[RMDB]
RNA sequence: GGGAACGACUCGAGUAGAGUCGAAAAGGGGUCAAAGCGAUAAGACCCUGCCAGGCGAAGAACUACACUGAAGCCUCCACGGUGUAGGGAGCCUGAUGGGUCUUUUGACGCUUUGACGGAGGCACCCAAAACCGACUUUCGUUCGCGAAAGUCGGAAGAUUCCAUCAACGUUCGCGUUGAUGGAAUCAAAAGAAACAACAACAACAAC
Reactivity to 2A3 in 0.01 (KOAc 150mM, MgCl2 10mM, bicine 150mM(pH8.5), 24C), signal-to-noise 2, nucleotides 027 to 156: g020g010g080g010u000c010a000a000a000g020c010g020a050u080a300a040g010a000c000c000c000u020g220c100c000a010g010g010c000g180a300a030g000a050a000c010u000a000c000a000c000u020g020a070a020g020c000c010u020c000c000a010c010g010g000u000g000u000a010g000g010g010a000g000c000c000u000g000a020u020g000g000g000u010c000u020u060u100u120g030a010c020g000c000u000u010u000g000a000c010g010g040a000g030g000c000a040c020c010c010a010a040a030a050c000c000g010a010c020u000u010u000c000g040u000u050c240g000c010g150a010a000a000g000u000c000g000g000a010a010
Source information
The data come from the RNA Mapping Database (RMDB), library RNAMAK. An RNA of 207 nucleotides, treated with 2A3 and read out base by base.